RNA sequence: GGGAACGACUCGAGUAGAGUCGAAAAGAACACGUCUCGGGACGACGCUAAAAUCGCCCUGGUCGGGAUGGGUUUAACGACCCCUCGGGUUUCCUAGUUCCUAAAACUAGGUGGUGGAGUCAUAUAAAAAACUUCUACACGUUCGCGUGUAGAAGAACCCUUUUCAAUGGUUCGCCAUUGAAAAGGGAAAAGAAACAACAACAACAAC
Reactivity to 2A3 in 0.01 (KOAc 150mM, MgCl2 10mM, bicine 150mM(pH8.5), 24C), signal-to-noise 1, nucleotides 027 to 156: g080a040a000c010a000c060g010u020c010u020c000g020g010g000a110c160g000a000c030g040c200u060a030a030a030a000u030c040g070c080c000c030u100g080g110u060c010g000g020g050a070u120g080g020g030u000u040u080a140a020c010g010a030c010c030c000c020u010c060g030g000g000u000u060u020c000c000u000a000g010u030u020c040c000u100a050a030a020a020c030u010a010g050g000u000g030g000u050g010g060a100g040u070c040a030u100a010u300a140a020a000a020a040a100c000u000u000c000u020a000c000a000c020g000u020u020c130g020c010g110u000g000u000a010g000a000a000g000a000a000